[RMDB]
An RNA of 177 nucleotides, treated with 2A3 and DMS and read out base by base. Conditions: 150 mM KOAc, 10 mM MgCl2 and 150 mM bicine (pH 8.5), 24 C. DMS adducts were read by reverse transcription with MarathonRT.

RNA sequence: GGGAACGACUCGAGUAGAGUCGAAAAAGACAUACGUUCGCGUAUGUCUGACGGGCACCUGAGCCUAAGGAAAUGCUCUAUGACAGGACACACUGAUUGUGAUACCUCGAGAUUUCGAUCUCGAGAAUCACUACACGCGAUUCGUCGCGUGUAGUGAAAAAGAAACAACAACAACAAC
Reactivity to 2A3 in 0.01 (KOAc 150mM, MgCl2 10mM, bicine 150mM(pH8.5), 24C), signal-to-noise 2, nucleotides 027 to 126: a000g010a000c000a010u020a020c010g010u000u100c250g000c020g130u000a010u020g010u000c000u000g010a010c020g000g020g000c030a030c050c070u010g040a040g060c010c040u050a080a020g060g030a050a110a100u090g030c020u000c010u040a100u130g110a030c010a030g050g000a060c010a010c000a010c080u110g100a300u120u120g020u040g090a060u120a140c010c010u000c020g000a010g000a000u030u070u120c200g060a020u000c000u000c000g020a000g000a000a010
Reactivity to DMS in 0.01 (KOAc 150mM, MgCl2 10mM, bicine 150mM(pH8.5), 24C), signal-to-noise 4, nucleotides 027 to 126: a010g010a010c000a000u000a000c000g040u000u010c210g040c000g040u000a000u000g000u000c000u010g010a080c160g000g000g000c040a070c030c030u010g000a110g020c010c020u020a070a080g010g000a090a070a070u010g000c060u000c030u000a070u020g000a130c120a060g000g000a140c060a070c040a060c050u010g010a100u020u000g000u000g010a110u000a100c180c000u000c000g010a020g000a010u000u000u000c190g020a020u000c000u000c000g010a000g000a080a070